RNA sequence: GGGAACGACUCGAGUAGAGUCGAAAAGUUGUAAGGUUCGCCUUACAACAAAAUAAAACAGGGUAGUACCGGCCUGAAAAAGGUACGAAGAUCGAAAGAUCAAAAGACACUUGUUCGCAAGUGUCAAGCAGUAAUGUUGGUUCGCCAACAUUACUGCAAAAGAAACAACAACAACAAC
Reactivity to 2A3 in 0.01 (KOAc 150mM, MgCl2 10mM, bicine 150mM(pH8.5), 24C), signal-to-noise 1, nucleotides 027 to 126: g010u010u000g000u000a000a000g050g000u030u060c160g130c000c010u000u000a000c000a000a000c000a000a000a000a000u050a000a040a000a010c020a020g050g000g040u030a050g020u010a020c010c040g120g140c020c030u010g280a070a000a000a000a000g040g000u000a000c000g010a070a000g010a000u000c010g000a060a000a060g000a010u040c030a050a040a070a040g000a000c010a000c000u010u010g020u100u110c190g040c130a010a010g000u000g000u010c000a000a010
This 177-nucleotide RNA was probed chemically with 2A3. The reactions ran in a buffer of 150 mM KOAc, 10 mM MgCl2 and 150 mM bicine (pH 8.5), at 24 C.